[RMDB]
Chemical mapping of a 177-nucleotide RNA with DMS and 2A3.
RNA sequence: GGGAACGACUCGAGUAGAGUCGAAAAAAAAGAUAUGGAAGUGGGCUUCGAAGAACAUAGUGAAGAAGUGUAUUCGGAAACGAAUACAUGUAAAGCUAUGGGAGAAGUCCCACUUCCUAAGUCAAAACAAGGGAGUUAAGUUCGCUUAACUCCCUUGAAAAGAAACAACAACAACAAC
Reactivity to DMS in 0.01 (KOAc 150mM, MgCl2 10mM, bicine 150mM(pH8.5), 24C), signal-to-noise 2, nucleotides 027 to 126: a040a050a150a080g000a010u000a020u010g010g000a020a000g040u000g030g010g000c000u010u020c010g000a110a110g020a120a240c010a000u000a010g010u010g020a000a060g010a190a300g000u000g010u010a000u000u000c000g020g000a010a000a020c010g010a020a000u000a000c010a000u000g000u000a000a110a300g000c000u000a000u000g000g000g000a010g020a010a010g020u030c000c000c000a000c000u000u000c000c000u010a010a010g000u000c020a040a080a070a130
Reactivity to 2A3 in 0.01 (KOAc 150mM, MgCl2 10mM, bicine 150mM(pH8.5), 24C), signal-to-noise 1, nucleotides 027 to 126: a000a020a000a070g000a000u000a000u010g010g000a010a020g000u000g000g000g040c030u020u000c040g210a180a020g000a000a000c000a010u000a010g000u020g140a280a300g010a000a000g200u010g000u010a000u010u020c000g010g020a000a000a000c000g000a000a000u000a020c000a000u090g000u000a010a010a000g000c010u010a000u000g000g000g010a000g020a000a000g000u030c000c000c000a000c000u000u010c000c000u000a000a000g000u010c000a000a010a020a020

For DMS, 2,285 sequencing reads were counted. The reactions ran in a buffer of 150 mM KOAc, 10 mM MgCl2 and 150 mM bicine (pH 8.5), at 24 C. Reactivities are given for positions 27 through 126.